[RMDB]
RNA sequence: GGGAACGACUCGAGUAGAGUCGAAAACUCGAUUGCAGAACGACGAUACGCUUUGUAUAGAUUCUUAGCGAUCUAUAAACAAAAUAGACAUGAAAGAAAUGUCUAUGUCGUGAAUGCUUUCGAGAAAGGGUAUAGUUAUGUUCGCAUAACUAUACCCAAAAGAAACAACAACAACAAC
Reactivity to DMS in 0.01 (KOAc 150mM, MgCl2 10mM, bicine 150mM(pH8.5), 24C), signal-to-noise 4, nucleotides 027 to 126: c020u000c000g000a000u000u000g010c000a020g010a260a010c000g000a010c010g030a040u020a200c160g030c030u000u010u000g020u070a140u010a010g000a040u010u010c010u080u020a090g000c160g010a000u020c000u010a010u000a080a090a100c030a000a000a030a030u000a000g000a010c000a000u040g000a110a110a160g000a100a140a040u010g000u000c000u000a010u000g010u000c020g000u010g000a180a100u000g000c010u010u000u000c010g010a030g010a060a060a080
Reactivity to 2A3 in 0.01 (KOAc 150mM, MgCl2 10mM, bicine 150mM(pH8.5), 24C), signal-to-noise 9, nucleotides 027 to 126: c000u000c000g000a000u010u010g000c010a000g030a080a010c000g000a010c010g030a040u120a160c050g030c070u040u020u020g050u020a030u020a050g060a060u100u060c050u130u150a050g030c060g080a000u000c010u010a040u040a040a160a010c050a020a040a010a010u010a000g010a000c000a000u060g120a160a130a130g140a060a220a030u010g000u000c000u000a010u040g000u000c000g000u010g050a120a010u010g000c000u000u000u000c000g000a000g020a050a020a010
An RNA of 177 nucleotides, treated with DMS and 2A3 and read out base by base. Source: RMDB library OK1LIB, as collected in RNAgym. For DMS, 6,838 sequencing reads were counted. The RNA was probed in 150 mM KOAc, 10 mM MgCl2 and 150 mM bicine (pH 8.5) at 24 C.